[RMDB]
RNA sequence: GGGAACGACUCGAGUAGAGUCGAAAAACGCGCGACUAUACGUAGUCGCGCGAAGAAGGCUGAACUCCGUGCAAAUACACGAUGAAGUGUUGCUCGGAGCACGCGGAGGUGUACGCACCUCCGCGAACACCAAUCGCUAUUUCGAUAGCGAUUGGUGAAAAGAAACAACAACAACAAC
Reactivity to 2A3 in 0.01 (KOAc 150mM, MgCl2 10mM, bicine 150mM(pH8.5), 24C), signal-to-noise 2, nucleotides 027 to 126: a030c000g000c000g000c040g050a000c000u000a000u060a090c180g100u050a000g010u000c000g010c010g000c000g040a000a020g030a000a000g120g060c110u140g030a150a020c000u040c030c000g000u010g020c010a120a180a080u300a140c020a010c050g210a150u280g210a280a030g030u010g000u040u010g010c000u000c010g000g000a000g000c020a000c030g000c030g000g020a020g000g000u000g010u160a070c300g030c060a000c020c000u000c010c000g000c000g010a000a000

The record gives the reactivity of an RNA of 177 nucleotides to 2A3. 2A3 adducts were read by reverse transcription with SuperScript II with manganese. Conditions: 150 mM KOAc, 10 mM MgCl2 and 150 mM bicine (pH 8.5), 24 C. Values cover nucleotides 27 to 126. The 2A3 profile rests on 930 reads. It was measured as part of the RMDB library RFM100.